Structure probing data (2A3 and DMS) for a 177-nucleotide construct. The RNA was probed in 150 mM KOAc, 10 mM MgCl2 and 150 mM bicine (pH 8.5) at 24 C. Values cover nucleotides 27 to 126. It was measured as part of the RMDB library RFMREP.
RNA sequence: GGGAACGACUCGAGUAGAGUCGAAAAAAGCUGUCGUCCAGUACGUUUCCGGUGAUCAAGGACGUAAGCCGGAGGAGCAAAGGUGAUUAGAGACCCCUGUAGUUCCGGCCGUAAACUAUGCCAACUGCUCUAUGAAACAGUUCGCUGUUUCAUAGAGAAAAGAAACAACAACAACAAC
Reactivity to 2A3 in 0.01 (KOAc 150mM, MgCl2 10mM, bicine 150mM(pH8.5), 24C), signal-to-noise 4, nucleotides 027 to 126: a010a010g030c050u030g000u050c010g020u000c010c000a020g040u050a030c040g010u020u040u020c030c000g010g060u090g030a130u140c130a120a110g080g020a030c010g040u030a020a030g010c000c000g010g010a020g010g040a040g020c010a080a000a000g030g010u090g030a110u060u150a070g050a030g040a210c030c010c000c010u030g040u110a060g040u040u000c010c030g060g030c030c000g020u010a010a000a020c040u040a040u230g020c030c010a030a020c060u050g010
Reactivity to DMS in 0.01 (KOAc 150mM, MgCl2 10mM, bicine 150mM(pH8.5), 24C), signal-to-noise 4, nucleotides 027 to 126: a070a080g020c030u000g000u000c040g010u010c010c010a090g020u000a090c060g010u000u000u000c020c020g010g010u010g010a100u000c130a090a090g010g010a040c040g030u010a120a140g030c000c010g000g000a160g000g000a180g010c050a050a100a050g000g010u010g010a120u000u000a150g000a240g000a160c050c040c010c040u010g020u020a160g000u000u000c020c020g010g020c010c030g000u010a050a050a080c150u020a060u000g000c050c080a060a090c130u000g000
DMS adducts were read by reverse transcription with MarathonRT.